[RMDB]
The record gives the reactivity of an RNA of 207 nucleotides to 2A3.
Reactivities are given for positions 27 through 156.
The reactions ran in a buffer of 150 mM KOAc, 10 mM MgCl2 and 150 mM bicine (pH 8.5), at 24 C.
Values are in units of 0.01, from 0 to 300, in steps of 10.
For 2A3, 1,599 sequencing reads were counted.
RNA sequence: GGGAACGACUCGAGUAGAGUCGAAAAGCAACUUAGGAUUUUAGGCUCCCAGUGCGUGUCUCGAACCAUGCCGGGCCAAACCCACGGGGGCUGGCGGUCCCCGUGCGGUCAAAAUCAAACCGCUGGAAAAACAGUUCUAGCUUCGGCUAGAACUGAAGGACGUAACAUAGUUCGCUAUGUUACGUCCAAAAGAAACAACAACAACAAC
Reactivity to 2A3 in 0.01 (KOAc 150mM, MgCl2 10mM, bicine 150mM(pH8.5), 24C), signal-to-noise 2, nucleotides 027 to 156: g030c030a010a100c090u120u110a120g020g080a180u120u100u040u140a080g040g000c030u120c060c020c100a030g030u100g090c020g040u040g030u020c100u070c190g080a080a050c040c000a030u050g010c010c010g000g000g020c000c040a080a060a000c000c000c000a000c000g000g000g000g000g000c000u010g020g000c000g000g000u000c000c000c000c000g030u000g000c020g000g020u030c000a040a080a020a160u100c040a050a210a070c020c000g000c020u030g020g040a120a130a000a020a000c010a000g000u000u000c000u000a000g000c000u020u060c190g040g000c000u000a000g000a000a000c000u010g010a000a000